[RMDB]
RNA sequence: GGGAACGACUCGAGUAGAGUCGAAAAGAUAUGGAUUAAUGCCGGAACGCUAUAAUCUAACUCCCCACCAAGCCGUCGGAAACGACGGACUUGAGGUUAGGUAGCGUUCCGGCAUUAAUCCUAAGUCCCGUCAUAUAACGUUCGCGUUAUAUGACGGAAAAGAAACAACAACAACAAC
Reactivity to DMS in 0.01 (KOAc 150mM, MgCl2 10mM, bicine 150mM(pH8.5), 24C), signal-to-noise 2, nucleotides 027 to 126: g020a180u000a300u020g030g020a000u000u010a030a010u000g020c020c000g030g040a030a010c000g030c000u010a070u010a300a170u000c010u000a030a010c020u000c040c020c020c050a300c080c010a020a010g010c000c020g000u000c020g010g000a030a150a240c010g000a030c000g050g010a040c020u000u000g010a160g020g010u010u000a010g010g000u010a000g000c000g020u000u000c000c000g010g010c000a000u010u010a000a030u000c000c000u010a010a120g000u000c030
This 177-nucleotide RNA was probed chemically with DMS. Values cover nucleotides 27 to 126. The DMS profile rests on 1,098 reads. The reactions ran in a buffer of 150 mM KOAc, 10 mM MgCl2 and 150 mM bicine (pH 8.5), at 24 C.